[RMDB]
This 207-nucleotide RNA was probed chemically with 2A3. The RNA was probed in 150 mM KOAc, 10 mM MgCl2 and 150 mM bicine (pH 8.5) at 24 C. The 2A3 profile rests on 1,547 reads.

RNA sequence: GGGAACGACUCGAGUAGAGUCGAAAAGGGGUCGAUGGGAGGUCUUCAGGAGCAACAGCCUACUGAAGCCUCCACGGUAGGACAUGCUCGCAGAGACCAUCGAUCAUCGACGGAGGCACCCAAAAGACACUAUGCCGCUUCGGCGGCAUAGUGUCAAGUGAAUCACAUUGUUCGCAAUGUGAUUCACAAAAGAAACAACAACAACAAC
Reactivity to 2A3 in 0.01 (KOAc 150mM, MgCl2 10mM, bicine 150mM(pH8.5), 24C), signal-to-noise 1, nucleotides 027 to 156: g010g030g050g080u010c000g010a000u000g010g000g000a020g000g000u000c000u030u040c020a040g080g000a000g000c020a040a110c070a110g010c010c000u000a000c000u000g060a090a030g000c000c000u000c000c000a020c000g000g000u040a000g000g030a030c100a190u300g000c010u000c020g020c000a000g010a010g000a040c020c010a070u270c020g000a010u000c010a000u010c010g010a010c000g000g000a030g000g000c000a030c020c000c030a000a130a010a010g000a000c010a000c000u010a000u010g010c000c020g000c010u040u140c290g140g000c030g000g000c000a000u000a000g020u000g000u010c000a000a000